[RMDB]
The data come from the RNA Mapping Database (RMDB), library M2PK50. Chemical mapping of a 177-nucleotide RNA with DMS and 2A3. The DMS profile rests on 4,196 reads. For DMS the reverse transcriptase was MarathonRT. Conditions: 150 mM KOAc, 10 mM MgCl2 and 150 mM bicine (pH 8.5), 24 C. For 2A3, 7,047 sequencing reads were counted.
RNA sequence: GGGAACGACUCGAGUAGAGUCGAAAAUGAGACACCUUCGGGUGUCUCACAUUAAGCUGACCAGCUAUGAGGACAAUAUCGUCAUGCACAAAUAGAAUAAAACAGCUUGCUCCUUCGGGAGCAAGAACUAUGAUGUCUUGUUCGCAAGACAUCAUAGAAAAGAAACAACAACAACAAC
Reactivity to DMS in 0.01 (KOAc 150mM, MgCl2 10mM, bicine 150mM(pH8.5), 24C), signal-to-noise 4, nucleotides 027 to 126: u000g000a000g020a010c000a000c000c010u000u010c220g030g010g040u000g010u000c000u000c000a020c130a060u000u010a060a070g010c040u010g020a170c050c030a100g010c020u010a040u000g010a110g000g010a050c040a070a070u000a300u000c060g010u000c040a050u010g010c040a100c100a060a070a080u010a070g010a090a080u010a040a050a040a070c170a100g010c000u000u000g000c000u000c000c000u000u010c160g020g000g010a000g010c000a000a020g010a040a120
Reactivity to 2A3 in 0.01 (KOAc 150mM, MgCl2 10mM, bicine 150mM(pH8.5), 24C), signal-to-noise 5, nucleotides 027 to 126: u050g000a000g000a000c000a000c000c000u020u050c240g050g000g000u000g010u000c000u000c000a000c000a010u060u050a040a010g010c010u010g070a070c040c020a010g020c010u060a050u120g060a060g080g040a030c080a140a100u080a090u300c090g050u020c050a040u110g040c080a030c040a090a120a040u170a070g160a110a070u160a160a090a010a020c030a010g030c000u010u000g000c000u010c010c000u030u070c230g070g010g000a000g020c000a000a000g010a000a000